[RMDB]
RNA sequence: GGGAACGACUCGAGUAGAGUCGAAAAAAGUUUGAUUGACAAGUACACGUUGGAACGGGUUGAGGAUAUGUUUUCACUGUACGGUAAAUUUGGAAACGAAUUGCCCACUCUCUCCGACUUUUUGCUGCUAAUCGUAAAUGUUCGCAUUUACGAUUAGAAAAGAAACAACAACAACAAC
Reactivity to 2A3 in 0.01 (KOAc 150mM, MgCl2 10mM, bicine 150mM(pH8.5), 24C), signal-to-noise 7, nucleotides 027 to 126: a010a000g070u070u040u030g060a080u040u030g010a030c040a100a030g010u020a020c040a010c120g070u090u090g010g000a040a020c040g050g070g100u100u180g120a140g120g050a060u060a040u260g030u020u030u000u000c010a020c020u020g030u070a020c040g010g030u090a090a110a090u040u030u040g030g010a010a030a010c000g000a020a040u040u040g030c000c020c000a030c010u000c000u000c000u000c010c020g000a010c000u020u030u030u050u100g030c040u050g010
Reactivity to DMS in 0.01 (KOAc 150mM, MgCl2 10mM, bicine 150mM(pH8.5), 24C), signal-to-noise 9, nucleotides 027 to 126: a020a020g000u000u000u000g010a050u010u000g000a070c130a090a140g000u000a020c050a030c230g020u010u000g010g010a020a010c050g010g020g020u010u000g010a130g010g010a130u020a060u010g000u010u000u000u000c020a020c040u000g000u000a030c060g000g010u000a020a030a040u000u000u000g010g000a080a060a160c020g010a030a030u000u000g000c030c010c300a100c260u000c010u000c030u000c010c040g000a020c030u000u000u000u000u000g010c110u000g010